RNA sequence: GGGAACGACUCGAGUAGAGUCGAAAAAAAUUAUGGUCGCCGGCACGUAUGUGCACACCGAGAAUGACACUCUUUCGCCGUCUACCGUGUCGGUAGUCUUGCACAUCAGGAAUCCGUCUGCGUUGAAUGGUAUUUGCCAAUUCGUUGGCAAAUACCAAAAAGAAACAACAACAACAAC
Reactivity to DMS in 0.01 (KOAc 150mM, MgCl2 10mM, bicine 150mM(pH8.5), 24C), signal-to-noise 1, nucleotides 027 to 126: a070a000a040u000u000a020u030g000g030u000c080g010c050c060g000g000c010a080c050g000u000a060u010g020u000g010c070a070c200a080c150c040g010a020g020a110a080u030g000a100c150a060c130u010c060u000u010u000c060g000c050c070g010u000c050u000a030c110c050g000u010g010u010c010g000g000u000a020g000u000c060u000u000g040c100a030c040a010u000c030a110g010g000a050a090u010c060c030g010u020c060u000g000c110g010u020u000g000a060a170